[RMDB]
RNA sequence: GGGAACGACUCGAGUAGAGUCGAAAAGAAGUUAUCGGUGAUCACUAUGUCACCCGUUUGCCACUCAUGAGCGUAGAAGUUACGUGGGUCGUACAGUGCACGGCGUAAACUUUUGUGAAACUCGAUAUAAUUUAGUGCUCUUCGGAGCACUAAAUUAAAAAGAAACAACAACAACAAC
Reactivity to DMS in 0.01 (KOAc 150mM, MgCl2 10mM, bicine 150mM(pH8.5), 24C), signal-to-noise 2, nucleotides 027 to 126: g030a080a130g010u000u000a030u000c090g050g000u000g010a150u010c070a060c150u000a060u010g000u000c060a090c060c000c030g020u000u000u000g020c040c030a080c080u010c060a110u000g020a120g010c040g040u010a070g000a110a090g010u010u000a040c010g050u020g000g000g020u010c100g020u010a110c200a070g000u020g020c060a070c020g010g000c110g000u010a040a090a040c010u000u000u010u000g000u000g010a060a090a100c090u020c030g000a080u000a090
Reactivity to 2A3 in 0.01 (KOAc 150mM, MgCl2 10mM, bicine 150mM(pH8.5), 24C), signal-to-noise 1, nucleotides 027 to 126: g120a060a020g150u180u130a030u040c020g040g020u030g070a070u060c020a020c070u050a070u100g020u010c010a070c010c010c000g020u000u020u150g020c030c010a020c000u050c020a000u090g000a020g050c000g020u020a020g070a300a000g070u080u090a170c050g020u030g080g080g040u010c010g070u020a070c070a100g050u040g090c020a000c050g040g010c040g070u000a060a090a140c010u010u260u260u120g030u010g040a080a030a020c000u010c020g000a000u000a000